[RMDB]
Background
Chemical mapping of a 177-nucleotide RNA with DMS and 2A3. The RNA was probed in 150 mM KOAc, 10 mM MgCl2 and 150 mM bicine (pH 8.5) at 24 C. The data come from the RNA Mapping Database (RMDB), library OK2TRN. Values cover nucleotides 27 to 126.
RNA sequence: GGGAACGACUCGAGUAGAGUCGAAAAGAUUCAGCGAUCGGCACAGAUGCAACAAAGAAGGUCCAAGUGCAACCGGAGACACCAGCAGCAGAUCCAGUUGCUGCAGAACCUGCUCCAACCGCCGUAACGGCACAGUGUAAUUCGUUACACUGUGCCGAAAAGAAACAACAACAACAAC
Reactivity to DMS in 0.01 (KOAc 150mM, MgCl2 10mM, bicine 150mM(pH8.5), 24C), signal-to-noise 2, nucleotides 027 to 126: g010a110u010u000c090a080g010c050g020a070u030c030g010g000c020a060c090a090g030a080u030g020c050a070a080c120a050a080a080g010a080a050g000g010u010c020c040a050a110g010u010g030c010a090a070c090c050g030g010a090g040a080c100a090c060c100a120g000c030a000g020c040a050g000a120u020c160c100a110g000u000u000g010c010u000g000c030a090g020a070a020c090c060u000g000c030u000c020c010a120a150c150c110g010c030c020g000u020a080a120
Reactivity to 2A3 in 0.01 (KOAc 150mM, MgCl2 10mM, bicine 150mM(pH8.5), 24C), signal-to-noise 1, nucleotides 027 to 126: g040a090u090u090c030a030g010c030g090a070u070c050g030g050c050a010c000a070g110a040u100g030c040a020a030c020a120a150a070g100a050a030g070g050u000c010c020a090a050g030u030g030c030a050a020c030c010g020g020a050g040a000c050a040c030c030a010g000c030a020g000c010a000g010a110u060c020c030a010g090u100u020g000c000u010g000c010a010g000a010a040c010c040u040g040c000u000c010c010a040a080c040c000g020c010c070g020u000a060a040